[RMDB]
RNA sequence: GGGAACGACUCGAGUAGAGUCGAAAAUGGCAUUGCCAGGCGACCGAGAUCGCGCGCGCGCUCGACUGGCAGAUCGCGCUCGGGCCGAACGUGUUCAAGCCGUCCUGGCGGCACGGCAACGCGAUCACCCUAGUAAUUACUUCGGUAAUUACUAGGGAAAAGAAACAACAACAACAAC
Reactivity to DMS in 0.01 (KOAc 150mM, MgCl2 10mM, bicine 150mM(pH8.5), 24C), signal-to-noise 9, nucleotides 027 to 126: u010g010g020c030a130u020u010g000c000c010a020g000g010c030g010a070c080c030g020a160g010a050u000c050g030c020g020c230g010c040g010c150g010c090u000c020g000a050c030u010g020g020c020a070g000a050u000c100g010c020g000c150u000c080g010g010g010c010c010g000a120a080c020g010u000g000u000u010c110a180a170g020c000c000g000u010c080c050u010g010g010c010g010g000c050a030c040g010g000c070a100a060c030g010c040g000a050u010c060a290
Reactivity to 2A3 in 0.01 (KOAc 150mM, MgCl2 10mM, bicine 150mM(pH8.5), 24C), signal-to-noise 7, nucleotides 027 to 126: u110g040g000c060a080u050u240g010c010c010a010g010g020c030g040a040c030c020g030a040g000a140u120c030g010c010g000c020g000c010g000c010g010c080u010c010g030a040c040u040g060g000c010a010g050a110u100c060g000c000g010c050u050c080g050g030g000c010c020g020a070a020c020g020u060g040u150u160c130a150a030g000c000c020g110u210c020c040u040g040g020c000g010g000c010a000c000g030g010c030a060a030c020g010c010g020a010u040c020a090
The data come from the RNA Mapping Database (RMDB), library OK2TST. This 177-nucleotide RNA was probed chemically with DMS and 2A3. For 2A3 the reverse transcriptase was SuperScript II with manganese. The 2A3 profile rests on 21,282 reads.